[RMDB]
RNA sequence: GGGAACGACUCGAGUAGAGUCGAAAAUCUAUGAAAAAAAUCGAAUUGGUAAAAAUCUCAAAAUUUCGAUUUUCACCAAUCCGAUUCACUCUGUAAUAAAGAAUAAACAACAUACAGCCAUUGACACGACCCUUAAUUCUUUCGAGAAUUAAGGGUCAAAAGAAACAACAACAACAAC
Reactivity to DMS in 0.01 (KOAc 150mM, MgCl2 10mM, bicine 150mM(pH8.5), 24C), signal-to-noise 1, nucleotides 027 to 126: u000c060u000a090u030g000a000a000a060a230a040a000a030u000c020g000a000a000u040u000g000g000u000a000a060a000a000a000u000c000u000c280a020a000a080a060u000u000u020c140g040a000u000u000u000u000c040a000c000c010a000a000u000c060c010g000a000u000u000c040a120c070u000c000u000g010u000a120a060u000a070a120a100g000a100a070u090a150a080a050c180a040a080c170a070u120a100c050a070g030c280c090a050u050u000g040a050c220a090c190
Reactivity to 2A3 in 0.01 (KOAc 150mM, MgCl2 10mM, bicine 150mM(pH8.5), 24C), signal-to-noise 3, nucleotides 027 to 126: u020c030u030a080u100g050a030a070a080a040a000a000a000u000c000g000a000a000u000u010g010g010u020a000a000a020a020a010u030c040u040c130a090a190a230a220u120u180u170c070g010a000u000u000u010u000c000a000c000c000a000a000u000c010c000g000a000u010u000c000a040c020u080c030u040g030u040a020a040u080a100a200a020g170a070a060u240a210a040a040c080a020a000c010a010u130a070c020a010g050c040c030a110u060u160g030a000c020a010c210
Annotation:
The record gives the reactivity of an RNA of 177 nucleotides to DMS and 2A3. Source: RMDB library RFM100, as collected in RNAgym. 2A3 is a SHAPE reagent: it acylates the 2'-hydroxyl of flexible nucleotides of all four kinds.